[RMDB]
RNA sequence: GGGAACGACUCGAGUAGAGUCGAAAAGAAUAAGAUUCUUACAUCUUGAUGAAGAGGAAUGGGAAGCCGAAAUCUAAACUGAAACAGAGGCGUCACCCAAUUAUCAAUUGGUAAGUGAUAUCUAUGUUUAGUCCUAUUCUUUCGAGAAUAGGACUAAAAAAGAAACAACAACAACAAC
Reactivity to DMS in 0.01 (KOAc 150mM, MgCl2 10mM, bicine 150mM(pH8.5), 24C), signal-to-noise 6, nucleotides 027 to 126: g000a070a080u030a090a090g010a300u000u000c030u000u030a070c090a070u010c050u000u010g000a050u010g010a080a090g000a140g000g000a100a070u010g010g000g040a100a110g000c040c020g010a090a110a110u010c090u000a050a090a110c150u020g000a080a040a030c160a070g000a230g000g000c010g030u020c050a050c020c000c020a020a070u000u000a040u000c100a030a020u000u010g010g010u020a010a040g000u010g000a060u010a050u000c010u000a030u050g030u000
Reactivity to 2A3 in 0.01 (KOAc 150mM, MgCl2 10mM, bicine 150mM(pH8.5), 24C), signal-to-noise 6, nucleotides 027 to 126: g050a010a060u170a050a010g050a030u040u010c010u000u020a010c010a090u040c040u060u020g040a070u070g010a060a070g090a050g170g140a110a100u120g030g010g040a030a020g000c010c000g030a070a060a030u020c020u070a050a040a210c120u110g070a080a050a020c050a030g060a030g130g000c020g040u070c010a040c020c010c000a020a030u090u060a060u100c040a000a010u050u050g060g000u040a060a060g000u020g130a020u030a020u080c020u010a080u090g100u000

Chemical mapping of a 177-nucleotide RNA with DMS and 2A3. It was measured as part of the RMDB libraries RFM100 and RFMREP. The RNA was probed in 150 mM KOAc, 10 mM MgCl2 and 150 mM bicine (pH 8.5) at 24 C. For 2A3 the reverse transcriptase was SuperScript II with manganese.